Structure probing data (DMS and 2A3) for a 177-nucleotide construct. For DMS the reverse transcriptase was MarathonRT. Values cover nucleotides 27 to 126. The RNA was probed in 150 mM KOAc, 10 mM MgCl2 and 150 mM bicine (pH 8.5) at 24 C.
RNA sequence: GGGAACGACUCGAGUAGAGUCGAAAAACACCAGUCUACGGACUGGUGACAAGAUCUUUUUUUCCAGUGGAGACUGCUGACCUGCAGCAAUCCUAGGAUCUUUAGAUGAUGUACCCCAGGCCAAUAAAGUUCCAUGAUGGUUCGCCAUCAUGGAACUAAAAGAAACAACAACAACAAC
Reactivity to DMS in 0.01 (KOAc 150mM, MgCl2 10mM, bicine 150mM(pH8.5), 24C), signal-to-noise 1, nucleotides 027 to 126: a110c010a010c010c000a000g000u000c000u000a070c230g000g010a080c000u040g000g010u000g000a020c140a050a140g000a020u000c000u000u000u000u000u000u000u000c000c040a170g000u040g000g000a090g020a040c070u000g010c040u010g000a070c290c300u010g020c030a000g000c120a050a030u000c000c000u010a230g000g020a000u000c000u040u000u040a060g010a040u000g000a290u000g000u050a150c030c010c010c000a070g000g020c010c140a130a150u030a110a100
Reactivity to 2A3 in 0.01 (KOAc 150mM, MgCl2 10mM, bicine 150mM(pH8.5), 24C), signal-to-noise 2, nucleotides 027 to 126: a000c010a000c000c000a000g000u000c000u020a040c300g060g000a000c000u010g010g000u000g000a000c000a000a070g050a040u000c040u000u020u020u000u010u060u050c030c040a120g080u080g100g000a050g010a090c040u000g040c010u070g060a200c080c100u150g050c000a010g000c030a030a020u000c010c000u000a090g000g000a030u010c000u020u040u060a070g000a040u130g020a040u060g050u110a060c000c000c000c020a020g110g000c050c020a090a030u110a160a140